[RMDB]
RNA sequence: GGGAACGACUCGAGUAGAGUCGAAAAGAAACCGCCUAUUCGAUCGUAGGCGGAACGAUCGGGUAAAGAAAAUUAAAGGAGCCAAGGAGACGGCUCCGUCUCCUUAAGAAAAGGGUAAUCCCGAAAACCCAUAUGAAUACUUCGGUAUUCAUAUGGGAAAAGAAACAACAACAACAAC
Reactivity to DMS in 0.01 (KOAc 150mM, MgCl2 10mM, bicine 150mM(pH8.5), 24C), signal-to-noise 4, nucleotides 027 to 126: g010a100a100a080c000c000g000c050c010u000a020u010u000c000g010a010u010c060g000u000a070g000g000c010g000g010a020a010c040g000a050u000c000g000g010g020u000a090a060a120g000a100a060a090a110u020u040a050a080a100g000g000a030g000c070c030a020a060g000g010a090g000a040c070g020g010c070u030c050c020g000u000c020u000c000c010u000u000a070a170g020a070a070a050a060g000g000g000u010a080a100u020c000c000c000g000a040a020a130a180
Reactivity to 2A3 in 0.01 (KOAc 150mM, MgCl2 10mM, bicine 150mM(pH8.5), 24C), signal-to-noise 4, nucleotides 027 to 126: g050a040a090a010c000c010g010c000c000u000a010u060u160c040g120a100u040c010g020u000a000g000g000c000g000g000a000a000c020g000a030u000c010g000g000g010u060a040a070a040g100a050a120a030a030u180u130a090a020a040g030g000a000g000c030c010a030a040g090g000a050g020a020c050g030g070c040u030c030c000g000u000c000u000c000c000u020u020a060a050g110a060a160a010a020g020g010g040u030a020a050u060c000c000c000g010a030a000a000a010